Chemical mapping of a 177-nucleotide RNA with DMS and 2A3. For 2A3, 1,290 sequencing reads were counted. For DMS, 1,316 sequencing reads were counted.
RNA sequence: GGGAACGACUCGAGUAGAGUCGAAAACGGUCGAAAUUCGUUUCGACCGAAUAUGCUAGCUGAGCACAGCUGCAAUGCUAAGCUGAAAGCCUGCUGCAAGCGCGAGUUCGGCGUUCGCGCCGAACAAUGAAUGCCGAGUAUUCGUACUCGGCAUUCAAAAAGAAACAACAACAACAAC
Reactivity to DMS in 0.01 (KOAc 150mM, MgCl2 10mM, bicine 150mM(pH8.5), 24C), signal-to-noise 2, nucleotides 027 to 126: c000g030g000u000c000g040a000a010a030u000u020c220g030u000u000u000c000g000a020c000c000g010a030a070u000a050u020g010c020u000a030g020c000u000g010a300g050c010a150c070a140g020c080u000g000c080a010a170u000g000c070u010a030a090g000c000u020g000a110a100a070g020c020c010u000g000c060u000g000c040a100a070g020c160g020c170g000a110g000u000u000c010g010g000c000g030u000u010c200g020c000g030c000c000g000a010a000c030a040a070
Reactivity to 2A3 in 0.01 (KOAc 150mM, MgCl2 10mM, bicine 150mM(pH8.5), 24C), signal-to-noise 1, nucleotides 027 to 126: c000g000g000u000c000g000a020a000a000u110u110c200g050u010u000u000c000g000a010c010c000g000a000a010u090a030u060g050c050u070a010g000c010u020g030a020g040c010a010c010a220g000c010u040g020c070a060a100u190g040c060u080a060a050g010c020u000g070a130a030a000g020c010c010u020g020c000u020g030c050a080a070g090c040g050c020g140a040g020u000u040c000g000g000c060g030u000u030c220g000c020g000c000c000g000a010a010c010a000a020